Overview
Chemical mapping of a 177-nucleotide RNA with 2A3 and DMS. Values are in units of 0.01, from 0 to 300, in steps of 10.
[RMDB]
RNA sequence: GGGAACGACUCGAGUAGAGUCGAAAAGAUAUGGAGAAUCAGCUUUUGACGCUCCUCGUGUCGGAAACGACACCGGGAGCGAUAAGCUGUGGCUCCUAAGUCAAAUCCCAUGGUUCGCCAUGGGAAACCUUUAACUGCUGUUCGCAGCAGUUAAAGGAAAAGAAACAACAACAACAAC
Reactivity to 2A3 in 0.01 (KOAc 150mM, MgCl2 10mM, bicine 150mM(pH8.5), 24C), signal-to-noise 2, nucleotides 027 to 126: g020a020u050a030u160g010g000a000g000a050a090u080c010a000g030c020u170u130u170u270g210a160c150g000c020u010c000c000u000c000g000u000g000u000c020g020g010a000a070a050c000g010a000c010a000c010c020g000g000g010a000g010c010g000a010u010a000a000g000c000u010g010u030g040g010c000u030c000c000u010a100a010g020u000c030a050a010a240u080c010c000c000a010u010g020g040u070u100c300g070c090c000a000u000g000g000g000a020a020a030
Reactivity to DMS in 0.01 (KOAc 150mM, MgCl2 10mM, bicine 150mM(pH8.5), 24C), signal-to-noise 3, nucleotides 027 to 126: g010a030u010a300u000g000g000a020g010a170a130u000c000a010g010c000u000u010u010u010g010a180c080g030c000u000c000c010u000c300g010u000g010u000c000g000g000a030a070a160c010g000a000c000a010c000c130g020g000g010a010g020c020g010a000u000a040a010g000c000u000g000u000g000g010c000u000c010c000u010a030a130g010u000c020a110a130a110u010c000c000c000a000u010g000g000u000u010c220g020c000c000a000u000g000g000g000a000a020a050
About this RNA
The RNA was probed in 150 mM KOAc, 10 mM MgCl2 and 150 mM bicine (pH 8.5) at 24 C. For DMS, 2,655 sequencing reads were counted. The 2A3 profile rests on 4,638 reads.